[RMDB]
RNA sequence: GGGAACGACUCGAGUAGAGUCGAAAACAGUGGGCAGGGAGAAAUCUUAAGAGUUCGGGCUCUGGGGAUAGUAUGCUCGCAAGGGUGAAAAUUAAAGAAAUUGACGGAGCUACACCACAAGGAGUGGUUUACGAGUAUCUUUCGAGAUACUCGUAAAAAAAGAAACAACAACAACAAC
Reactivity to 2A3 in 0.01 (KOAc 150mM, MgCl2 10mM, bicine 150mM(pH8.5), 24C), signal-to-noise 4, nucleotides 027 to 126: c040a000g020u050g020g020g000c030a040g010g050g020a030g040a030a050a060u070c020u060u080a100a050g050a020g060u090u200c040g030g140g000c010u020c050u060g000g020g010g000a000u000a010g040u080a040u160g020c020u000c030g050c040a060a080g060g030g010u070g000a080a040a030a060u170u150a060a060a080g100a060a090a050u090u050g050a020c080g030g010a020g010c000u020a030c020a040c040c050a030c040a050a040g140g020a120g040u050g000g040
Reactivity to DMS in 0.01 (KOAc 150mM, MgCl2 10mM, bicine 150mM(pH8.5), 24C), signal-to-noise 7, nucleotides 027 to 126: c100a090g030u010g000g010g010c080a080g000g000g000a120g000a090a090a070u020c060u000u020a130a070g010a100g010u010u020c130g020g000g010c020u000c030u020g000g010g010g000a070u010a080g010u010a060u020g010c000u000c020g020c100a050a060g010g000g000u010g000a060a040a070a080u020u040a060a100a100g000a050a050a090u010u020g020a060c070g000g000a060g020c040u000a060c110a090c010c010a010c030a090a080g010g000a130g020u000g000g010